[RMDB]
RNA sequence: GGGAACGACUCGAGUAGAGUCGAAAAAGGAUACCUGCUGUUUUCUGAAUCUUGGAGAUAUUCUUAUCAGAGAUAGGUCCAAAAGACUUUCUGCCAGGCGAUGUUAGUCAAUGUAUUUCAGCGUAAGAAAGCGUAUCUUCUUCGGAAGAUACGCUUUAAAAGAAACAACAACAACAAC
Reactivity to 2A3 in 0.01 (KOAc 150mM, MgCl2 10mM, bicine 150mM(pH8.5), 24C), signal-to-noise 1, nucleotides 027 to 126: a000g180g070a150u120a120c000c000u000g030c010u000g210u120u040u000u030c060u070g080a130a060u000c020u030u110g070g000a020g000a110u050a090u020u120c030u000u190a170u060c010a010g060a000g000a040u000a020g170g060u050c020c000a050a050a050a050g020a000c010u000u000u030c070u050g150c030c000a010g040g010c100g000a020u070g000u060u030a000g170u130c120a050a040u140g000u060a010u010u120u000c050a050g070c060g010u020a000a000g120
Reactivity to DMS in 0.01 (KOAc 150mM, MgCl2 10mM, bicine 150mM(pH8.5), 24C), signal-to-noise 3, nucleotides 027 to 126: a040g030g000a130u040a040c020c030u000g020c040u030g010u010u000u030u010c060u000g000a110a100u020c090u000u020g000g010a090g000a050u000a060u010u020c040u020u020a110u030c120a070g000a050g020a020u020a030g000g030u000c010c020a040a130a100a140g000a050c020u010u000u000c020u010g000c060c060a060g030g000c070g000a060u000g020u000u010a060g010u010c040a070a080u000g000u000a050u000u000u010c040a020g010c190g030u000a090a070g020

An RNA of 177 nucleotides, treated with 2A3 and DMS and read out base by base. Reactivities are given for positions 27 through 126. DMS adducts were read by reverse transcription with MarathonRT. The 2A3 profile rests on 311 reads. 2A3 adducts were read by reverse transcription with SuperScript II with manganese. The reactions ran in a buffer of 150 mM KOAc, 10 mM MgCl2 and 150 mM bicine (pH 8.5), at 24 C.